The record gives the reactivity of an RNA of 177 nucleotides to DMS.
The reactions ran in a buffer of 150 mM KOAc, 10 mM MgCl2 and 150 mM bicine (pH 8.5), at 24 C.
[RMDB]
RNA sequence: GGGAACGACUCGAGUAGAGUCGAAAAGUUUGGUUACUUCUGUUGGUGAUUCUAGUGAAAUCGCCACUAAAAUGUUUGAUUCCUUUGUUAAUAGUUUCGUCUCGCUGUAUAAUGUCACACGCGAUAAACAUCUCCUAUUGUUCGCAAUAGGAGAUGUAAAAGAAACAACAACAACAAC
Reactivity to DMS in 0.01 (KOAc 150mM, MgCl2 10mM, bicine 150mM(pH8.5), 24C), signal-to-noise 2, nucleotides 027 to 126: g010u000u000u000g000g010u000u000a070c070u000u010c150u010g000u010u000g030g000u000g000a030u000u000c070u000a110g000u010g000a080a040a020u000c010g040c010c000a020c050u000a040a030a070a090u010g010u000u010u000g010a240u000u000c000c020u000u010u000g030u000u000a040a180u010a140g020u000u000u000c050g000u000c090u000c010g000c030u010g010u010a160u010a130a150u010g000u000c150a030c040a080c200g020c040g000a050u000a090a140
Source: RMDB library 15KREP, as collected in RNAgym. Reactivities are rounded to 0.1 and cut off at 0 and 3.